The record gives the reactivity of an RNA of 207 nucleotides to 2A3 and DMS.

[RMDB]
RNA sequence: GGGAACGACUCGAGUAGAGUCGAAAAAGGGCAGGGUGAAAUUCCCGAUCGGCGGUAAAGUCCGCGAGCCGAACGAAAAAGGUUUGGCAGGAGCCGGUGAGAUUCCGGUACCGACAGUAUAGUCUGGAUGACCACUUCAGCUUCGGCUGAAGUGGAAGAUUAUCAUUAUGUUCGCAUAAUGAUAAUCAAAAGAAACAACAACAACAAC
Reactivity to 2A3 in 0.01 (KOAc 150mM, MgCl2 10mM, bicine 150mM(pH8.5), 24C), signal-to-noise 1, nucleotides 027 to 156: a020g100g010g020c090a090g020g010g020u010g010a020a020a020u080u010c010c000c010g000a030u010c000g000g000c000g000g000u000a000a010a000g000u000c000c000g000c000g000a000g000c000c000g010a000a000c010g060a070a020a080a120a080g090g000u020u000u000g010g000c000a000g010g000a000g000c010c000g010g000u000g000a010g000a000u000u000c010c000g000g010u000a000c000c000g010a000c000a000g000u000a010u010a010g030u000c010u000g000g040a030u130g030a010c000c000a000c020u000u000c000a000g000c000u030u120c190g170g000c010u000g020a000a000g000u000g010g000a000a010
Reactivity to DMS in 0.01 (KOAc 150mM, MgCl2 10mM, bicine 150mM(pH8.5), 24C), signal-to-noise 2, nucleotides 027 to 156: a140g000g030g040c050a130g050g040g030u000g010a050a220a200u060u000c010c010c020g030a060u010c000g010g000c020g010g000u000a140a130a060g010u000c000c040g000c030g010a300g020c000c000g020a000a190c010g010a050a170a170a150a190g030g000u000u000u010g000g000c000a040g020g020a150g020c030c000g020g020u000g000a200g010a300u000u010c010c000g000g000u000a010c000c000g000a070c010a030g000u000a290u000a040g000u000c030u020g000g020a170u010g000a240c010c000a030c050u000u000c000a020g010c010u000u000c300g040g010c000u000g000a000a000g030u020g010g000a010a040
The 2A3 profile rests on 2,157 reads. DMS (dimethyl sulfate) methylates the pairing face of unpaired adenines and cytosines.